[RMDB]
Chemical mapping of a 177-nucleotide RNA with DMS and 2A3.
Conditions: 150 mM KOAc, 10 mM MgCl2 and 150 mM bicine (pH 8.5), 24 C.
The 2A3 profile rests on 25,291 reads.
Reactivities are given for positions 27 through 126.
The data come from the RNA Mapping Database (RMDB), library TTRDES.

RNA sequence: GGGAACGACUCGAGUAGAGUCGAAAAGAUAUGGACGUUGGUAGGCGAUGAGAUGCCAUGUCGGAAACGACAUGCAUCGAGCCUAUUGACGUCCUAAGUCAAAACGUCGUAGGUUCGCCUACGACGACACAGUACGGUAGUUCGCUACCGUACUGUGAAAAGAAACAACAACAACAAC
Reactivity to DMS in 0.01 (KOAc 150mM, MgCl2 10mM, bicine 150mM(pH8.5), 24C), signal-to-noise 6, nucleotides 027 to 126: g000a040u000a300u010g000g000a010c010g020u000u000g000g030u000a010g010g020c000g020a210u030g020a170g000a010u000g010c180c110a000u010g010u000c000g000g000a070a060a130c000g010a010c000a010u000g000c020a000u000c000g000a090g010c000c000u000a000u000u000g010a010c000g010u000c000c000u000a010a050g000u000c020a130a060a110a220c020g010u000c000g030u000a010g010g010u000u010c300g020c000c000u000a010c000g010a000c000g010a170
Reactivity to 2A3 in 0.01 (KOAc 150mM, MgCl2 10mM, bicine 150mM(pH8.5), 24C), signal-to-noise 6, nucleotides 027 to 126: g020a020u040a040u120g000g010a000c010g010u010u010g030g020u000a010g000g030c080g170a300u300g110a190g000a080u020g100c180c050a010u000g020u000c010g010g010a060a050a010c000g000a000c000a000u010g000c010a000u010c000g000a010g010c000c000u010a000u010u010g000a000c000g010u000c000c000u000a000a000g010u010c000a040a020a070a120c030g000u000c000g000u000a010g000g090u060u060c300g140c090c000u000a000c000g000a010c000g010a020